[RMDB]
RNA sequence: GGGAACGACUCGAGUAGAGUCGAAAAAUGUACGUGUGGGUUUGGGUUUGGGUUUGGGUUUGGGUUUACGCGACCACAAGGAAAGGACCACAAAGCGUGGGUAUACAUAUGGGCCUUUCCAAAAAAACAUUACAUGAGUGUUCGCACUCAUGUAAUGAAAAGAAACAACAACAACAAC
Reactivity to DMS in 0.01 (KOAc 150mM, MgCl2 10mM, bicine 150mM(pH8.5), 24C), signal-to-noise 1, nucleotides 027 to 126: a080u010g000u000a070c160g020u020g030u000g000g000g000u020u000u000g030g010g000u020u000u000g000g000g000u000u010u000g000g060g000u020u010u000g000g000g000u010u010u030a070c090g000c120g010a030c020c040a040c220a080a100g010g000a000a000a000g000g000a030c000c000a020c150a080a070a120g020c100g000u000g000g000g000u010a050u020a050c080a050u010a070u000g010g000g000c000c010u000u000u000c000c000a000a000a020a070a030a030a050
Reactivity to 2A3 in 0.01 (KOAc 150mM, MgCl2 10mM, bicine 150mM(pH8.5), 24C), signal-to-noise 1, nucleotides 027 to 126: a000u070g000u090a050c050g000u060g000u020g040g180g000u090u150u140g080g000g040u130u050u160g140g020g000u050u110u150g050g000g020u090u170u150g090g000g000u000u040u000a020c050g000c000g040a020c010c010a080c020a150a000g000g000a000a000a000g010g020a010c020c020a030c100a120a070a000g000c030g010u010g030g060g050u080a070u010a090c050a020u070a110u120g020g020g000c000c000u000u020u020c000c000a000a040a000a010a020a000a000
Structure probing data (DMS and 2A3) for a 177-nucleotide construct. The 2A3 profile rests on 927 reads. Reactivities are given for positions 27 through 126. Conditions: 150 mM KOAc, 10 mM MgCl2 and 150 mM bicine (pH 8.5), 24 C. For DMS the reverse transcriptase was MarathonRT.